Chemical mapping of a 207-nucleotide RNA with 2A3. The data come from the RNA Mapping Database (RMDB), library M2RFPK.
RNA sequence: GGGAACGACUCGAGUAGAGUCGAAAACUCAAUGUAGGGAAUAACAUUGAAUUGAUACAAUUACCUUUUUCGGUGUAGGGAAAAACACCGAAUUGAUACAAAUACCUUUCUCAAUGUAGGGAAUAACAAAACAGGCAUCGCUUCGGCGAUGCCUGAACCCAUGCUUAACCUUCGGGUUAAGCAUGGGAAAAGAAACAACAACAACAAC
Reactivity to 2A3 in 0.01 (KOAc 150mM, MgCl2 10mM, bicine 150mM(pH8.5), 24C), signal-to-noise 1, nucleotides 027 to 156: c020u010c000a030a030u140g000u130a170g000g150g020a190a150u150a210a050c030a020u000u000g040a000a000u110u100g040a100u100a120c030a150a040u140u070a120c000c020u050u000u000u040u000c000g000g000u010g020u000a010g000g050g000a090a090a010a000a060c000a000c000c010g000a000a000u000u040g000a000u030a060c000a000a060a000u030a010c000c000u000u080u030c040u070c000a060a050u130g040u090a040g000g010g020a050a100u070a230a070c050a000a050a020a050c000a010g000g080c000a000u020c010g000c010u110u080c200g020g010c000g000a000u000g000c010c000u000g000a000a010
The RNA was probed in 150 mM KOAc, 10 mM MgCl2 and 150 mM bicine (pH 8.5) at 24 C.